RNA sequence: GGGAACGACUCGAGUAGAGUCGAAAAUAAGAAAAAUAAACAAGUGGUGGUAGUCCGCCACUCUAAGGGAACGCCUUUAGAAGAAGAGGCUAGGUGGUAUUCCGGUGUGGGAUACUUGGUAAUAUGUAAGGGGAUGGUACGUUCGCGUACCAUCCAAGGUAGGUACAAUCUUCGGAUUGUACCUACCAAAAGAAACAACAACAACAAC
Reactivity to 2A3 in 0.01 (KOAc 150mM, MgCl2 10mM, bicine 150mM(pH8.5), 24C), signal-to-noise 1, nucleotides 027 to 156: u220a000a070g100a000a300a000a000a000u300a050a140a000c220a260a060g000u000g010g010u000g010g210u020a000g000u000c000c000g040c010c010a000c000u000c000u030a000a030g000g000g000a070a080c020g230c040c000u020u030u030a000g000a130a010g000a030a000g050a040g000g000c010u030a030g130g000u120g010g000u030a010u050u050c000c060g110g050u190g040u300g130g000g000a000u020a030c000u010u100g010g000u120a120a090u140a070u190g090u040a050a000g000g030g000g000a000u000g000g000u000a030c010g030u060u040c160g000c000g160u030a050c010c000a000u000c000c000a000a000